[RMDB]
RNA sequence: GGGAACGACUCGAGUAGAGUCGAAAACUAGCUAUUAUGUUAAGUGUAUUUACAUCUAUCUUAUUGGUAGUAGCUGGAAUAUUAAACGUGGUGCGCUGAUUGACGGUGCUUAAAUGUUAUAGAGUUAACAGCCUAAGCAAUAGGGUGCAAGGUGACGAUGAAAAGUACACUUCGGUGUACUUUUCAUAAAAGAAACAACAACAACAAC
Reactivity to 2A3 in 0.01 (KOAc 150mM, MgCl2 10mM, bicine 150mM(pH8.5), 24C), signal-to-noise 4, nucleotides 027 to 156: c010u010a010g000c020u020a010u110u040a050u160g030u100u070a050a030g000u020g070u140a220u110u200u160a080c040a080u060c060u090a020u020c020u090u050a090u120u170g190g000u000a010g000u010a000g000c000u000g000g040a060a070u110a110u150u210a130a120a030c090g040u080g000g020u020g000c010g000c030u040g020a130u090u110g080a080c030g010g040u030g010c000u010u070a030a040a030u030g000u020u000a050u000a070g200a050g110u050u050a010a000c000a010g000c010c000u030a040a020g030c000a000a060u060a140g080g030g000u000g020c000a030a050g050g000u010g030a010c070g020
Reactivity to DMS in 0.01 (KOAc 150mM, MgCl2 10mM, bicine 150mM(pH8.5), 24C), signal-to-noise 2, nucleotides 027 to 156: c020u000a050g010c010u000a020u000u010a010u000g010u000u010a020a020g040u000g060u000a120u000u000u000a090c120a130u010c090u000a080u000c020u000u000a090u010u010g060g060u000a030g010u000a050g020c030u000g020g020a090a110u000a100u000u010a060a060a120c080g020u000g020g040u010g020c050g060c020u000g000a180u000u010g010a130c080g000g000u000g010c040u000u010a010a010a080u010g000u010u000a090u000a110g020a200g010u000u000a020a030c040a060g020c060c020u000a060a120g030c050a040a120u000a140g000g020g010u000g000c040a040a070g010g030u000g020a090c070g000
Source: RMDB library OK3TST, as collected in RNAgym.
Chemical mapping of a 207-nucleotide RNA with 2A3 and DMS.
For DMS, 5,399 sequencing reads were counted.
Values are in units of 0.01, from 0 to 300, in steps of 10.
The RNA was probed in 150 mM KOAc, 10 mM MgCl2 and 150 mM bicine (pH 8.5) at 24 C.
The 2A3 profile rests on 1,819 reads.